[RMDB]
An RNA of 177 nucleotides, treated with DMS and 2A3 and read out base by base. Reactivities are rounded to 0.1 and cut off at 0 and 3. High 2A3 reactivity points to a flexible backbone, as in loops and unpaired stretches. 2A3 adducts were read by reverse transcription with SuperScript II with manganese. Values cover nucleotides 27 to 126. It was measured as part of the RMDB library OK2TST.
RNA sequence: GGGAACGACUCGAGUAGAGUCGAAAACGUCGUGCUGCCCGUAUGGCUCAACUUCGACGGCGAGCCGCAGCCCUACCCAACGCUGCCGCCUGGCACGGGCCGCCGCAUCCACAGCUACCGAGGUCACGAUUCACGUACGGUUCGCCGUACGUGAAUCAAAAGAAACAACAACAACAAC
Reactivity to DMS in 0.01 (KOAc 150mM, MgCl2 10mM, bicine 150mM(pH8.5), 24C), signal-to-noise 2, nucleotides 027 to 126: c140g040u020c040g070u020g040c060u000g010c040c030c040g030u000a060u010g040g020c020u000c050a090a300c070u000u010c180g040a110c120g000g000c170g000a040g020c000c050g010c050a040g010c000c030c070u020a080c060c030c010a090a110c240g000c020u010g030c000c030g000c050c030u010g010g000c150a060c040g000g000g010c000c070g010c020c050g010c030a090u000c020c030a060c100a080g010c020u000a020c040c010g010a030g000g000u000c060a080c180
Reactivity to 2A3 in 0.01 (KOAc 150mM, MgCl2 10mM, bicine 150mM(pH8.5), 24C), signal-to-noise 2, nucleotides 027 to 126: c020g070u070c010g060u110g030c000u050g020c000c020c010g020u040a100u150g030g020c010u020c060a050a040c080u190u170c090g160a110c070g050g000c020g010a030g010c010c010g010c000a020g000c020c000c000u090a100c000c000c000a030a050c030g000c020u010g040c000c040g050c020c070u080g030g000c060a010c050g000g000g010c000c000g000c000c010g010c000a070u040c020c020a090c030a030g000c020u050a040c040c020g040a020g130g000u070c030a000c130